[RMDB]
RNA sequence: GGGAACGACUCGAGUAGAGUCGAAAAGAACUCAGGAUCUCCUAAUGGGAAUCCCUAUAACAAUUGCCUUGCGCAAUGGGGAACGGCCGGAAUUGAAGCAUCUCAGUACGGCCAGGAAGAGAAAUCGCCGAUAAACGGAAUUCGUUCCGUUUAUCGGAAAAGAAACAACAACAACAAC
Reactivity to 2A3 in 0.01 (KOAc 150mM, MgCl2 10mM, bicine 150mM(pH8.5), 24C), signal-to-noise 5, nucleotides 027 to 126: g020a050a010c030u050c070a010g050g020a100u000c010u030c100c020u130a130a080u250g070g000g040a030a100u050c020c000c000u110a110u060a240a090c090a070a020u050u020g000c000c000u130u270g030c120g000c040a010a030u040g000g010g020g000a030a060c080g010g000c010c000g000g030a140a020u010u020g020a080a040g080c070a190u090c020u000c060a000g010u010a000c010g000g000c000c000a010g010g020a040a060g030a000g020a040a030a020u040c030g000
Reactivity to DMS in 0.01 (KOAc 150mM, MgCl2 10mM, bicine 150mM(pH8.5), 24C), signal-to-noise 3, nucleotides 027 to 126: g000a130a120c050u010c010a100g000g010a030u000c030u000c000c040u010a110a110u030g030g010g020a160a100u000c000c000c030u000a060u040a180a060c180a100a060u000u000g020c010c020u010u010g000c120g020c020a000a000u000g000g010g020g000a080a100c100g010g000c020c000g050g000a120a010u000u000g000a030a120g020c170a140u040c100u000c000a000g010u000a040c000g000g020c010c000a040g000g010a180a070g000a050g000a030a110a060u000c020g010

Conditions: 150 mM KOAc, 10 mM MgCl2 and 150 mM bicine (pH 8.5), 24 C. An RNA of 177 nucleotides, treated with 2A3 and DMS and read out base by base. The data come from the RNA Mapping Database (RMDB), libraries RFM100 and RFMREP. For 2A3 the reverse transcriptase was SuperScript II with manganese.